Overview: Structure probing data (2A3) for a 177-nucleotide construct. Values cover nucleotides 27 to 126. Source: RMDB library OK1LIB, as collected in RNAgym. For 2A3 the reverse transcriptase was SuperScript II with manganese. The RNA was probed in 150 mM KOAc, 10 mM MgCl2 and 150 mM bicine (pH 8.5) at 24 C.
RNA sequence: GGGAACGACUCGAGUAGAGUCGAAAAAUGACCACAAGACGUCGGGAUCGAUAACGCCACCCUGUUCCUCGGUGCCGACCAGCGGGCGAGUCGCCUGCUCCGGUCCAUGCCCGGGCACUCGACCGAAUGUGGAUAUGGCGUUCGCGCCAUAUCCACAAAAAGAAACAACAACAACAAC
Reactivity to 2A3 in 0.01 (KOAc 150mM, MgCl2 10mM, bicine 150mM(pH8.5), 24C), signal-to-noise 1, nucleotides 027 to 126: a000u150g090a080c000c000a000c110a060a030g120a030c060g040u030c000g000g000g150a040u040c000g020a000u060a110a070c000g040c000c020a060c000c000c030u020g000u100u080c000c000u000c000g040g020u130g050c080c020g050a060c000c000a040g100c000g000g000g010c000g000a020g150u060c160g050c000c000u120g040c000u030c080c200g080g000u070c150c080a120u250g060c020c000c090g050g000g020c000a040c000u020c000g010a010c000c000g070a020a100